[RMDB]
The record gives the reactivity of an RNA of 177 nucleotides to DMS and 2A3. High DMS reactivity at an A or C suggests that its Watson-Crick edge is free. For 2A3 the reverse transcriptase was SuperScript II with manganese.
RNA sequence: GGGAACGACUCGAGUAGAGUCGAAAAGAAAAGAAGGAGGCCGUAGUAGAUCAGUGGUGACGAAAAAGAAAGAAAGAAGUCACACCUCCGUCUGAUCCGUAUUAUGGCCGAUGGAGGUGGAGAGAAAGGCUUAACUAUACUUCGGUAUAGUUAAGCCAAAAGAAACAACAACAACAAC
Reactivity to DMS in 0.01 (KOAc 150mM, MgCl2 10mM, bicine 150mM(pH8.5), 24C), signal-to-noise 4, nucleotides 027 to 126: g000a090a060a070a050g000a110a080g010g020a060g000g040c050c060g000u000a050g030u020a080g000a080u010c030a030g020u000g010g030u000g010a040c060g020a020a060a040a050a050g000a060a050a070g000a090a110a110g000a110a140g000u010c040a070c020a170c040c000u010c030c020g000u000c000u030g010a060u040c010c090g000u010a080u070u020a090u010g000g010c280c200g010a020u000g010g000a000g010g000u000g000g000a040g000a070g010a050a080a100
Reactivity to 2A3 in 0.01 (KOAc 150mM, MgCl2 10mM, bicine 150mM(pH8.5), 24C), signal-to-noise 2, nucleotides 027 to 126: g020a000a090a000a000g040a000a040g050g020a030g000g000c050c010g010u030a010g000u000a010g000a130u020c040a020g020u060g090g010u060g020a000c070g120a040a000a030a000a040g170a000a030a000g080a030a080a040g080a000a100g030u020c020a000c000a020c020c010u000c000c000g000u000c000u010g040a120u030c010c010g010u040a170u160u180a110u240g000g010c030c040g000a000u000g000g000a000g000g010u020g000g030a070g000a010g040a050a090a000